Conditions: 150 mM KOAc, 10 mM MgCl2 and 150 mM bicine (pH 8.5), 24 C. An RNA of 177 nucleotides, treated with DMS and 2A3 and read out base by base. For DMS the reverse transcriptase was MarathonRT. 2A3 adducts were read by reverse transcription with SuperScript II with manganese. Reactivities are given for positions 27 through 126. As a SHAPE reagent, 2A3 marks flexible, mostly unpaired nucleotides at the ribose 2'-OH. The DMS profile rests on 2,979 reads.
RNA sequence: GGGAACGACUCGAGUAGAGUCGAAAAUCAAUCUUGCCGAUGUGGCGCGCACCUGCGAGGAGUUGAACGGAUUGGGGCUUGGUCGCGCGGUGCCGAUUGCCUGCGAUGUAUCGGACUAUGACGCGCAGCAUAGCGUGACUUUCGAGUCACGCUAUGCAAAAGAAACAACAACAACAAC
Reactivity to DMS in 0.01 (KOAc 150mM, MgCl2 10mM, bicine 150mM(pH8.5), 24C), signal-to-noise 2, nucleotides 027 to 126: u000c080a120a080u010c100u010u000g030c020c040g000a070u000g020u000g000g000c020g000c110g010c040a020c040c040u010g020c030g020a060g010g000a060g010u000u000g010a100a130c100g020g000a090u010u010g010g010g010g020c050u000u000g010g020u000c050g010c040g000c040g000g000u000g030c010c040g000a060u000u020g010c030c020u010g000c090g000a050u000g000u030a050u000c000g000g020a060c080u000a070u000g030a110c030g020c030g000c070a180
Reactivity to 2A3 in 0.01 (KOAc 150mM, MgCl2 10mM, bicine 150mM(pH8.5), 24C), signal-to-noise 2, nucleotides 027 to 126: u060c010a020a000u000c020u040u080g020c000c000g060a080u070g060u100g080g000c010g000c020g000c030a050c000c020u050g010c030g030a050g130g000a050g040u030u120g100a080a020c040g020g060a070u060u110g020g000g000g010c010u060u050g010g040u090c040g030c010g010c070g030g010u070g120c020c030g040a050u020u110g050c000c030u060g040c070g010a020u150g010u090a050u020c000g000g050a020c020u060a060u160g100a040c020g040c020g010c050a030